An RNA of 207 nucleotides, treated with DMS and 2A3 and read out base by base.
The reactions ran in a buffer of 150 mM KOAc, 10 mM MgCl2 and 150 mM bicine (pH 8.5), at 24 C.
The 2A3 profile rests on 815 reads.
For DMS the reverse transcriptase was MarathonRT.
For 2A3 the reverse transcriptase was SuperScript II with manganese.
[RMDB]
RNA sequence: GGGAACGACUCGAGUAGAGUCGAAAAUAACGUGGUGCCUCCAGCUUUGUUCCUUUGGCUUAGGAUUAUCUUGGCAAUGUGGGCACUUUUUUGUCGCCAUAUGAACUUUAAUGUAGUUUUUUCCAAUUCUGUGAAGAAAGUCAAUGGGAGCUUGAUAAAAUAAUAGUAUGUUCGCAUACUAUUAUUUAAAAGAAACAACAACAACAAC
Reactivity to DMS in 0.01 (KOAc 150mM, MgCl2 10mM, bicine 150mM(pH8.5), 24C), signal-to-noise 2, nucleotides 027 to 156: u010a080a120c060g010u000g020g010u000g010c010c000u010c080c020a210g000c040u010u000u000g020u000u000c010c010u000u040u000g000g040c060u000u000a100g030g000a120u000u000a060u010c070u010u000g020g010c030a080a090u000g030u000g040g040g030c020a060c030u000u000u000u000u000u000g020u000c050g000c010c010a050u000a110u010g010a060a050c000u000u000u000a050a120u010g020u000a100g010u000u000u000u000u000u000c030c010a070a120u000u000c070u000g010u000g030a090a080g000a070a050a060g020u000c040a070a080u010g000g010g010a090g020c040u000u000g000a130u000a020
Reactivity to 2A3 in 0.01 (KOAc 150mM, MgCl2 10mM, bicine 150mM(pH8.5), 24C), signal-to-noise 2, nucleotides 027 to 156: u120a010a020c030g040u080g030g000u000g030c010c010u000c000c000a000g040c040u140u040u040g010u030u020c010c000u100u000u000g080g000c020u060u110a040g010g020a010u090u080a090u190c030u030u070g020g000c040a090a110u140g010u110g090g000g000c000a000c000u090u010u010u020u090u060g030u020c030g050c000c000a030u060a140u080g050a040a030c020u100u130u100a200a060u240g080u120a080g050u020u020u020u030u090u030c040c010a020a050u120u010c050u080g060u040g090a030a050g040a060a040a000g000u010c020a020a020u030g010g020g000a010g000c020u010u050g030a070u100a170